[RMDB]
Chemical mapping of a 207-nucleotide RNA with 2A3 and DMS. The reactions ran in a buffer of 150 mM KOAc, 10 mM MgCl2 and 150 mM bicine (pH 8.5), at 24 C. The 2A3 profile rests on 1,221 reads. 2A3 adducts were read by reverse transcription with SuperScript II with manganese. The data come from the RNA Mapping Database (RMDB), library OK3TST.
RNA sequence: GGGAACGACUCGAGUAGAGUCGAAAACAGCCUCAAACCCCUGCACUGAAGUGAUCCACUGCCUCAGCCUCUGGAGUAGCUGCGACCUACAAGCACAUGCCACCAUGUCCAGCUAAUUUAUUUGUUAUUUUUCAUAUAGAUGGGGUCUCAAACUCGACACUCCCUGAUAUUUCGAUAUCAGGGAGUGAAAAGAAACAACAACAACAAC
Reactivity to 2A3 in 0.01 (KOAc 150mM, MgCl2 10mM, bicine 150mM(pH8.5), 24C), signal-to-noise 2, nucleotides 027 to 156: c030a020g090c030c000u050c000a050a100a160c010c010c020c000u020g000c050a030c050u050g060a070a010g020u000g080a050u000c000c030a030c050u000g000c010c010u040c040a020g000c000c010u110c020u020g020g000a040g020u030a010g010c040u030g040c020g020a020c000c020u090a100c050a090a030g060c050a060c010a140u200g020c010c000a040c070c010a030u050g000u010c010c020a000g010c020u010a040a060u090u100u060a090u070u090u030g030u050u000a090u080u100u020u020u080c030a040u070a010u040a240g040a070u040g000g000g020g020u040c010u000c030a030a030a030c020u030c010g100a010
Reactivity to DMS in 0.01 (KOAc 150mM, MgCl2 10mM, bicine 150mM(pH8.5), 24C), signal-to-noise 2, nucleotides 027 to 156: c070a110g040c020c020u000c040a060a130a200c040c010c000c010u010g020c100a100c070u020g020a110a070g030u010g000a130u010c000c060a090c030u010g000c010c010u000c030a060g020c030c020u000c040u010g050g010a080g030u000a030g000c030u000g010c030g010a050c010c000u010a080c040a060a100g020c010a100c070a100u000g030c010c010a080c040c040a080u010g000u000c020c010a060g000c030u010a000a070u010u000u000a050u020u010u000g000u000u000a180u030u000u000u000u010c030a070u000a120u000a080g010a070u000g020g020g060g050u000c030u000c030a060a040a130c050u000c020g010a300